Structure probing data (DMS and 2A3) for a 177-nucleotide construct. Conditions: 150 mM KOAc, 10 mM MgCl2 and 150 mM bicine (pH 8.5), 24 C. It was measured as part of the RMDB library OK1LIB. 2A3 adducts were read by reverse transcription with SuperScript II with manganese.
RNA sequence: GGGAACGACUCGAGUAGAGUCGAAAAAUAUCCAUCAGCAGGAAGAUGCAAAAAUAAUACUAUAGCUAUGCAAUGAAAGACUACUCAGCAAUAAAAAGAAACAAACUCGUCAUACAUGCAGCAACAACUGGAUUGUUCACUUCGGUGAACAGUCUAGAAAAGAAACAACAACAACAAC
Reactivity to DMS in 0.01 (KOAc 150mM, MgCl2 10mM, bicine 150mM(pH8.5), 24C), signal-to-noise 5, nucleotides 027 to 126: a070u020a100u030c000c010a090u030c050a110g000c060a050g000g020a070a060g000a060u020g020c060a020a090a080a080a050u020a050a110u020a040c100u020a100u020a060g000c050u010a030u000g000c050a030a050u020g000a080a040a080g010a050c040u000a060c030u010c020a050g040c060a060a050u040a030a030a050a060a090g010a080a060a060c070a050a050a050c070u010c040g010u000c010a070u020a060c050a040u010g000c040a040g000c060a060a050c140a080a120
Reactivity to 2A3 in 0.01 (KOAc 150mM, MgCl2 10mM, bicine 150mM(pH8.5), 24C), signal-to-noise 9, nucleotides 027 to 126: a010u140a060u010c010c000a030u050c040a020g060c010a020g080g060a130a080g060a120u080g040c090a030a040a050a040a020u250a080a060u080a080c090u120a060u080a120g010c010u040a030u100g030c020a100a070u110g070a180a100a030g040a040c020u030a030c020u050c050a040g020c040a070a040u160a150a090a040a010a000g180a060a080a020c050a030a100a030c030u030c050g040u020c030a010u050a160c020a020u090g060c030a010g020c020a040a050c010a050a060